[RMDB]
RNA sequence: GGGAACGACUCGAGUAGAGUCGAAAAAACGUUGCAUGAUCGUAAAACAUGCCCGGCUUACAGUGAGCCGCCUUUGAAAGAAAGGUUUACACGGACUCUGUUGCGUUACGCACGUACCUAACUUGUGAAAACGGCAUCUUGUUCGCAAGAUGCCGAACAAGCUGUGUAAGUUCGCUUACACAGCUUGAAAAGAAACAACAACAACAAC
Reactivity to 2A3 in 0.01 (KOAc 150mM, MgCl2 10mM, bicine 150mM(pH8.5), 24C), signal-to-noise 8, nucleotides 027 to 156: a010a000c000g000u000u000g000c000a000u000g010a050u170c040g060u220a090a140a010a000c000a000u000g000c000c000c000g010g000c000u020u020a030c020a050g010u020g070a000g000c000c000g020c000c010u050u020u010g090a110a070a000g030a010a010a000g030g000u020u070u030a020c040a010c030g030g020a040c040u020c030u100g040u050u020g020c000g020u040u040a060c200g010c020a010c010g020u020a020c000c010u030a070a110c050u120u160g020u030g090a040a030a030a030c000g000g000c000a000u000c000u010u020g020u060u050c110g000c120a000a000g000a000u000g000c000c000g000a000a000
Reactivity to DMS in 0.01 (KOAc 150mM, MgCl2 10mM, bicine 150mM(pH8.5), 24C), signal-to-noise 2, nucleotides 027 to 156: a060a030c040g010u000u010g030c010a030u000g010a080u020c020g010u010a040a060a040a060c020a030u000g010c020c070c020g030g000c000u000u000a050c070a260g020u000g010a040g050c000c020g000c000c010u000u000u020g020a130a090a250g000a060a030a020g020g010u000u000u010a130c090a140c040g040g010a080c050u000c060u020g020u000u000g020c010g000u010u000a070c090g000c020a060c070g010u000a080c050c030u000a070a100c100u000u000g030u000g000a090a040a100a190c000g010g020c010a010u010c000u000u010g030u000u000c300g040c020a010a000g000a020u000g010c000c000g000a000a000

An RNA of 207 nucleotides, treated with 2A3 and DMS and read out base by base.
The RNA was probed in 150 mM KOAc, 10 mM MgCl2 and 150 mM bicine (pH 8.5) at 24 C.
The 2A3 profile rests on 12,474 reads.